[RMDB]
RNA sequence: GGGAACGACUCGAGUAGAGUCGAAAAGAUAUGGACAAUGUGUAGGGAGAAGAUUCUGGUCGGAAACGACCAUUAGCUUCGAGGAUCUACACCGCUUGUCCUAAGUCAAAACGGCCGUUCGCGGCCGCCAUCGUAAGACGUUCGCGUCUUACGAUGGAAAAGAAACAACAACAACAAC
Reactivity to 2A3 in 0.01 (KOAc 150mM, MgCl2 10mM, bicine 150mM(pH8.5), 24C), signal-to-noise 2, nucleotides 027 to 126: g020a020u080a070u220g000g000a000c020a010a040u300g000u010g010u020a000g020g000g010a040g000a000a000g000a000u010u070c020u070g000g010u000c010g010g040a110a080a050c010g000a000c000c000a000u020u020a000g010c010u010u010c030g080a300g000g000a010u000c010u020a010c000a000c030c000g000c020u000u010g000u050c000c000u020a090a030g050u040c040a010a050a140a120c010g010g020c050c000g030u120u140c300g000c030g190g000c000c010g010
Reactivity to DMS in 0.01 (KOAc 150mM, MgCl2 10mM, bicine 150mM(pH8.5), 24C), signal-to-noise 2, nucleotides 027 to 126: g000a020u000a300u010g000g010a010c010a300a010u000g010u000g000u000a010g010g010g000a020g000a030a010g000a040u000u010c030u000g020g000u040c000g010g000a080a060a290c000g000a040c000c020a000u010u000a010g000c000u000u010c000g000a060g000g010a020u010c010u000a000c010a010c000c040g000c020u000u010g010u020c000c000u010a020a110g010u010c030a060a030a120a300c020g000g010c000c000g000u000u020c230g010c020g020g030c000c000g010